[RMDB]
RNA sequence: GGGAACGACUCGAGUAGAGUCGAAAAUGAACACCGUCGAAAUUAUGCGCAAGGCCGAAAUUACGAAUCCAGUCGCUCACGCGGUGAUCAACGAGACAGGGAUUAUCGUGAAUAUCGUCGAAAUUAAACUCACGUAAAUGUUCGCAUUUACGUGAGUAAAAGAAACAACAACAACAAC
Reactivity to DMS in 0.01 (KOAc 150mM, MgCl2 10mM, bicine 150mM(pH8.5), 24C), signal-to-noise 3, nucleotides 027 to 126: u010g030a060a090c040a120c050c020g000u010c040g010a060a090a130u010u000a100u010g020c030g000c100a160a140g000g010c100c050g000a080a100a100u000u000a090c060g000a070a100u000c030c060a070g000u010c040g000c030u010c090a130c150g010c020g010g030u000g000a060u000c040a050a100c070g000a130g000a110c070a090g000g020g010a090u010u000a070u000c010g000u010g020a070a080u010a050u020c100g010u010c040g020a050a100a110u010u020a080a070
Reactivity to 2A3 in 0.01 (KOAc 150mM, MgCl2 10mM, bicine 150mM(pH8.5), 24C), signal-to-noise 3, nucleotides 027 to 126: u100g010a060a010c030a020c050c010g050u060c020g040a000a050a140u250u080a080u220g030c040g000c010a040a120g050g000c020c010g070a020a060a070u150u100a080c040g030a000a030u030c010c010a040g080u080c010g020c040u050c020a060c000g020c010g000g000u020g010a030u000c020a040a130c040g070a010g060a050c040a040g000g030g070a010u060u020a050u120c030g020u030g060a060a010u080a040u120c050g040u010c030g020a010a000a040u080u130a150a260
This 177-nucleotide RNA was probed chemically with DMS and 2A3. Reactivities are rounded to 0.1 and cut off at 0 and 3. The data come from the RNA Mapping Database (RMDB), library OK2TST. For 2A3, 2,937 sequencing reads were counted. Values cover nucleotides 27 to 126.